[RMDB]
RNA sequence: GGGAACGACUCGAGUAGAGUCGAAAAAGGCUUCAAGGACUCCAACGUCAUCGAGGUGAGGAAGCUGCUGGCCAGGGUGGACAGCCGGUGCUGCCCCUGCUCGGGAACCCGCAGAGCUAGCUGCCGGCCUACCCGUGAAGUUCGCUUCACGGGUAGGAAAAGAAACAACAACAACAAC
Reactivity to 2A3 in 0.01 (KOAc 150mM, MgCl2 10mM, bicine 150mM(pH8.5), 24C), signal-to-noise 1, nucleotides 027 to 126: a000g040g000c030u090u030c070a120a100g150g000a070c050u030c080c030a140a130c070g060u100c050a100u110c040g050a090g020g060u100g010a050g110g000a020a020g020c030u060g010c020u040g030g000c020c030a090g000g000g000u150g010g070a040c030a020g010c000c030g000g090u090g020c080u030g020c000c020c020c000u010g000c060u010c020g080g000g120a130a110c040c020c020g000c030a060g020a030g080c000u050a020g000c040u080g000c000c030g000g000
Reactivity to DMS in 0.01 (KOAc 150mM, MgCl2 10mM, bicine 150mM(pH8.5), 24C), signal-to-noise 2, nucleotides 027 to 126: a050g010g000c030u000u000c030a130a150g000g000a130c030u010c010c090a070a140c160g010u000c080a060u010c130g000a070g010g020u020g000a140g000g010a030a070g010c030u000g000c020u000g020g000c080c030a090g000g010g030u000g000g000a040c120a160g000c000c040g010g020u010g010c020u000g030c110c020c010c030u000g020c020u010c180g000g000g000a140a110c030c030c050g020c050a080g000a110g010c060u030a040g000c020u000g010c030c030g010g000